An RNA of 177 nucleotides, treated with DMS and read out base by base.
Source: RMDB library OK2TRN, as collected in RNAgym.
The RNA was probed in 150 mM KOAc, 10 mM MgCl2 and 150 mM bicine (pH 8.5) at 24 C.
The DMS profile rests on 3,435 reads.
RNA sequence: GGGAACGACUCGAGUAGAGUCGAAAAUCAUCACGACCGGCCGCAACUUCAAUGACCUGUUGAAUGGGACGUGGGAGUUCUUCUCUGAUUCAGUGGUCGUCGCUUCUCAGAACGCCCCCGUAUAUCCUAAUACCCAAGCAUUCGUGCUUGGGUAUUAAAAAGAAACAACAACAACAAC
Reactivity to DMS in 0.01 (KOAc 150mM, MgCl2 10mM, bicine 150mM(pH8.5), 24C), signal-to-noise 3, nucleotides 027 to 126: u010c050a060u000c070a090c040g000a080c050c050g020g020c140c020g010c060a060a120c070u000u010c080a060a050u000g000a100c130c070u000g010u000u010g010a080a140u010g000g020g000a070c030g010u010g010g010g000a070g030u010u000c080u000u010c040u010c030u010g010a060u000u000c110a070g020u000g010g010u000c030g000u000c050g010c070u000u000c050u000c050a080g000a060a110c130g000c040c000c010c030c030g010u000a070u020a100u020c060c070